RNA sequence: GGGAACGACUCGAGUAGAGUCGAAAACAUAGCCUCACCAGAGAGAGCUAUCAGGGUCCUGUCAGCAAAAUCUUGCUGGCAUAUGCAAUAGUGUCUGGGUUUGGUGGUUGUAUAUGGGAUGGAUCCAUCCUCCCAUCAGUUUCGACUGAUGGGAGGAAAAAGAAACAACAACAACAAC
Reactivity to DMS in 0.01 (KOAc 150mM, MgCl2 10mM, bicine 150mM(pH8.5), 24C), signal-to-noise 2, nucleotides 027 to 126: c130a110u000a030g020c010c000u010c010a060c040c060a040g010a080g010a060g010a200g010c010u000a010u010c140a100g020g010g020u000c020c030u010g000u000c000a030g000c000a010a040a170a130u000c140u000u000g020c010u000g000g000c000a000u000a010u000g010c030a010a030u000a060g010u000g010u000c020u000g000g000g070u010u010u010g020g020u000g010g020u000u000g010u000a020u010a020u010g010g000g010a110u000g010g000a040u000c000c020a230